[RMDB]
RNA sequence: GGGAACGACUCGAGUAGAGUCGAAAACCCGUCGAUCGUUGUCAUGCCAUUCUCCGUCGAUAUUGAGGGGGCGACUGAAUAAACGGAAGUCAGUUCUCUAUUAAUAUUGUCUAUUAAAAAUAUAGACCCUCCCUAUAAUAUUCGUAUUAUAGGGAGGAAAAGAAACAACAACAACAAC
Reactivity to 2A3 in 0.01 (KOAc 150mM, MgCl2 10mM, bicine 150mM(pH8.5), 24C), signal-to-noise 2, nucleotides 027 to 126: c020c000c000g020u040c100g010a130u030c000g050u000u130g090u070c020a070u050g040c000c020a070u120u080c030u000c020c010g030u030c000g030a040u070a090u210u140g020a040g000g020g010g000g000c000g000a000c000u030g060a040a110u080a100a110a000c010g010g010a000a050g030u030c050a040g000u010u030c020u000c000u010a190u280u080a130a140u180a150u150u120g000u000c000u000a010u000u200a130a140a040a100a070u180a010u000a050g000a000c000
Reactivity to DMS in 0.01 (KOAc 150mM, MgCl2 10mM, bicine 150mM(pH8.5), 24C), signal-to-noise 1, nucleotides 027 to 126: c000c000c000g000u030c120g000a070u000c020g040u010u000g000u010c040a090u090g020c060c020a060u010u000c050u000c010c020g000u020c030g010a010u010a080u010u000g020a050g000g050g000g000g010c020g040a010c010u000g000a250a110u110a100a100a000c110g000g020a160a070g000u000c030a080g000u000u000c000u000c000u070a150u050u000a060a130u060a070u010u000g000u000c000u000a000u000u050a000a160a200a060a070u000a030u000a040g000a010c000
About this RNA
Chemical mapping of a 177-nucleotide RNA with 2A3 and DMS. The RNA was probed in 150 mM KOAc, 10 mM MgCl2 and 150 mM bicine (pH 8.5) at 24 C. For 2A3, 857 sequencing reads were counted. DMS (dimethyl sulfate) methylates the pairing face of unpaired adenines and cytosines. Reactivities are given for positions 27 through 126.